[RMDB]
RNA sequence: GGGAACGACUCGAGUAGAGUCGAAAAAAUGCCGCCUCAGUUCCAAGCUCUUUCGUGGCACUGUAAACAGUCCUAUUGAGUUAGGAGCAGUCAACCACGUUGCGAAGCUAAAUUAUCUGGUCGAGAGUUACGAUUCCCUACUUCGGUAGGGAAUCAACACAAAUAACUCUUUCGAGAGUUAUUUGUGAAAAGAAACAACAACAACAAC
Reactivity to 2A3 in 0.01 (KOAc 150mM, MgCl2 10mM, bicine 150mM(pH8.5), 24C), signal-to-noise 6, nucleotides 027 to 156: a000a000u090g050c030c020g030c010c010u030c030a050g020u070u040c020c000a050a020g000c000u000c010u030u040u040c040g010u020g010g000c070a000c010u010g020u070a060a130a150c050a110g090u010c000c000u010a030u030u120g140a190g300u040u010a010g000g000a000g000c000a000g010u020c010a010a010c010c000a000c020g000u010u040g050c100g130a090a030g010c010u050a040a090a080u250u140a090u100c080u070g020g030u070c040g040a020g000a020g140u050u070a050c070g000a000u000u000c000c000c000u000a000c010u020u060c150g070g000u010a000g000g000g000a000a000u000c000a000a000
Reactivity to DMS in 0.01 (KOAc 150mM, MgCl2 10mM, bicine 150mM(pH8.5), 24C), signal-to-noise 4, nucleotides 027 to 156: a080a030u000g000c020c040g020c020c030u000c040a090g010u000u010c020c030a200a300g000c020u000c010u000u000u000c020g040u000g010g010c030a050c010u000g010u000a090a100a140c080a160g010u000c000c000u000a050u000u010g010a300g020u000u000a020g010g020a130g000c010a040g000u000c030a080a040c010c010a030c030g020u000u000g020c110g010a090a080g040c030u000a060a030a040u010u010a080u000c050u000g020g020u000c030g010a090g000a120g010u010u000a070c110g000a050u010u000c000c000c000u010a010c010u000u010c240g020g030u000a020g010g010g010a000a000u000c000a030a240
The record gives the reactivity of an RNA of 207 nucleotides to 2A3 and DMS.
For DMS the reverse transcriptase was MarathonRT.
For 2A3, 6,599 sequencing reads were counted.
The DMS profile rests on 9,157 reads.